[RMDB]
RNA sequence: GGGAACGACUCGAGUAGAGUCGAAAACGCGCAUCGCGGUCAGCGUCCUCGCCGCUUGUUGCGCCAUACCGGUUAUCACGUCGGCGGCUGGCAGGACGGCAUUGACCAGGCCCGCGGCUUGACCGGCGGCUAUGGCACGAUUCGUCGUGCCAUAGCCAAAAGAAACAACAACAACAAC
Reactivity to 2A3 in 0.01 (KOAc 150mM, MgCl2 10mM, bicine 150mM(pH8.5), 24C), signal-to-noise 4, nucleotides 027 to 126: c040g020c000g020c020a080u060c060g010c060g030g010u010c030a010g030c020g050u040c010c030u010c040g010c010c000g020c000u010u150g050u010u070g060c070g000c010c010a070u130a170c030c030g000g000u150u080a190u190c070a050c170g060u040c030g030g020c000g020g000c010u020g040g000c050a030g040g010a020c000g010g040c050a090u020u240g050a110c020c000a000g040g020c000c000c000g020c020g000g000c030u090u190g030a090c010c000g010g000c030
Reactivity to DMS in 0.01 (KOAc 150mM, MgCl2 10mM, bicine 150mM(pH8.5), 24C), signal-to-noise 2, nucleotides 027 to 126: c060g000c010g000c040a050u000c120g000c060g000g000u000c070a120g000c050g000u000c000c000u000c090g020c020c010g020c020u020u040g000u000u000g040c230g000c040c130a140u030a070c090c070g000g010u070u020a060u020c080a050c090g020u000c110g020g010c020g030g020c000u010g030g020c070a000g000g000a060c050g070g030c030a100u040u000g000a090c050c020a260g000g040c060c100c010g000c040g000g010c030u000u000g000a120c010c000g000g040c190